Chemical mapping of a 207-nucleotide RNA with 2A3 and DMS. For DMS, 3,593 sequencing reads were counted. The reactions ran in a buffer of 150 mM KOAc, 10 mM MgCl2 and 150 mM bicine (pH 8.5), at 24 C.
RNA sequence: GGGAACGACUCGAGUAGAGUCGAAAACACACACCGGAGGUGAAAUGUCAGACAUAAAAUGGUUUGUUCAUGGACAGUACAGCAGCUCAAAUGUGGACUCAAAACAGCGACUAGUCUUCAAACCUGACUGUUGGUGGGACAGACGAUACUGGUACGCUAUAACCAGGAGGUUCGCCUCCUGGUUAUAAAAAGAAACAACAACAACAAC
Reactivity to 2A3 in 0.01 (KOAc 150mM, MgCl2 10mM, bicine 150mM(pH8.5), 24C), signal-to-noise 2, nucleotides 027 to 156: c080a010c000a000c010a030c040c110g020g050a120g000g080u100g040a050a080a060u030g010u000c000a010g020a020c010a010u080a040a160a040a110u060g030g000u010u010u000g000u010u010c040a040u110g090g020a040c010a020g000u040a000c020a050g090c020a020g020c050u000c030a050a050a020u060g010u010g020g030a090c020u030c070a010a070a070a130c020a010g010c000g000a000c010u030a010g030u020c020u080u040c060a110a140a030c010c010u060g050a060c010u070g100u180u060g020g060u060g030g020g000a010c010a060g010a020c020g030a000u020a040c010u000g000g030u080a110c000g000c010
Reactivity to DMS in 0.01 (KOAc 150mM, MgCl2 10mM, bicine 150mM(pH8.5), 24C), signal-to-noise 2, nucleotides 027 to 156: c030a140c090a140c040a060c070c090g000g020a110g030g010u000g010a030a070a300u000g020u010c000a040g000a050c010a050u000a020a070a130a110u010g010g010u000u000u000g010u010u000c010a090u020g030g000a130c040a100g030u030a030c030a130g060c070a050g030c030u010c020a030a040a070u000g020u000g000g010a210c010u000c030a070a080a070a100c040a070g010c020g000a090c040u000a060g020u000c030u010u000c080a040a000a080c030c010u000g000a080c080u040g020u010u000g020g030u020g000g000g000a080c010a120g000a140c050g000a130u000a080c010u000g040g010u000a030c060g020c050